[RMDB]
RNA sequence: GGGAACGACUCGAGUAGAGUCGAAAAGAUAUGGACCGUGUGGUUCAACAGCGACACGCAUCGGAAACGAUGUGUCGACAUGAACUAUACGGUCCUAAGUCAAAAGCCCGUACGUUCGCGUACGGGCGUGCUUGGAAUUCUUCGGAAUUCCAAGCACAAAAGAAACAACAACAACAAC
Reactivity to DMS in 0.01 (KOAc 150mM, MgCl2 10mM, bicine 150mM(pH8.5), 24C), signal-to-noise 1, nucleotides 027 to 126: g010a030u000a140u000g000g010a050c010c000g030u000g000u000g010g010u000u000c000a060a110c300a210g000c010g010a020c040a040c040g060c300a030u010c000g030g000a050a030a130c040g050a010u000g000u020g000u000c010g000a030c030a300u010g020a000a000c000u000a010u000a000c000g010g000u000c000c000u000a000a020g010u000c010a210a090a100a270g010c000c000c030g020u010a000c000g020u010u010c300g010c030g040u010a010c040g000g000g020c010

Source: RMDB library TTRDES, as collected in RNAgym. The record gives the reactivity of an RNA of 177 nucleotides to DMS. For DMS, 900 sequencing reads were counted. Values cover nucleotides 27 to 126.